[RMDB]
RNA sequence: GGGAACGACUCGAGUAGAGUCGAAAACAGACGACCUAACGCUACUUGCGAGGCACACAGAGAGGGAUGUCAUCAACCACACACUACAAUGCGGUCUAAACGUGGUGUUACAGUGGUCAAAAGAGUAGUGCAUACCUGGUUUCGACCAGGUAUGCACAAAAGAAACAACAACAACAAC
Reactivity to 2A3 in 0.01 (KOAc 150mM, MgCl2 10mM, bicine 150mM(pH8.5), 24C), signal-to-noise 2, nucleotides 027 to 126: c000a030g110a060c040g050a040c000c010u060a120a000c020g030c020u030a040c040u140u110g020c040g030a040g040g000c030a000c020a020c020a010g050a000g070a040g080g050g000a050u070g040u070c040a090u070c000a020a010c020c000a000c000a000c000a000c000u010a020c040a000a160u140g050c080g000g030u050c050u120a030a090a050c070g040u030g020g000u000g010u000u020a040c040a040g040u010g000g040u060c000a000a060a110a010g090a010g060u180a000
Reactivity to DMS in 0.01 (KOAc 150mM, MgCl2 10mM, bicine 150mM(pH8.5), 24C), signal-to-noise 2, nucleotides 027 to 126: c070a100g010a090c060g000a190c040c040u000a080a110c080g040c000u000a030c100u000u000g010c150g000a030g020g060c040a040c090a150c090a050g000a050g020a170g000g010g010a070u000g000u070c020a040u010c140a140a000c070c000a000c010a010c030a080c030u030a050c020a060a170u010g000c020g000g000u000c110u010a020a100a040c100g000u000g000g000u000g000u000u000a080c200a020g020u000g000g020u010c110a030a080a050a100g020a020g000u000a050